[RMDB]
RNA sequence: GGGAACGACUCGAGUAGAGUCGAAAAUUCAUUUUCUUUUGAAUCAGAAACCGUUUUGGAACACAUUAAUAAGAAUAGUCUGCAAUUCUUGCAAAAAUUGAGCUUGUCAAUUAGUUCUAAGCUUGAACAUGCCUAAUAGUUUCGACUAUUAGGCAUGAAAAGAAACAACAACAACAAC
Reactivity to DMS in 0.01 (KOAc 150mM, MgCl2 10mM, bicine 150mM(pH8.5), 24C), signal-to-noise 4, nucleotides 027 to 126: u000u010c010a030u010u010u000u000c050u010u000u000u000g000a040a010u000c090a200g010a140a130a190c090c040g030u010u000u000u010g010g010a030a040c040a100c150a050u000u010a030a030u010a030a040g000a050a050u000a070g010u000c110u020g010c040a040a110u010u000c120u000u000g010c080a030a060a020a070a060u000u000g000a060g010c050u000u000g010u020c030a020a040u000u010a210g010u000u000c010u000a030a040g000c110u010u010g010a050a150
Reactivity to 2A3 in 0.01 (KOAc 150mM, MgCl2 10mM, bicine 150mM(pH8.5), 24C), signal-to-noise 2, nucleotides 027 to 126: u020u020c010a020u020u020u070u150c020u020u060u020u070g020a020a040u070c040a080g150a120a070a080c040c050g050u070u080u050u120g020g030a030a010c030a000c010a070u050u240a120a060u090a110a000g020a030a040u030a040g130u050c050u050g030c030a020a030u140u010c020u090u050g000c020a040a030a080a100a110u030u030g020a040g030c050u060u040g060u050c020a010a100u040u020a050g010u000u020c020u060a020a030g010c020u050u030g000a030a000

Conditions: 150 mM KOAc, 10 mM MgCl2 and 150 mM bicine (pH 8.5), 24 C. This 177-nucleotide RNA was probed chemically with DMS and 2A3. For 2A3 the reverse transcriptase was SuperScript II with manganese. For DMS, 3,730 sequencing reads were counted.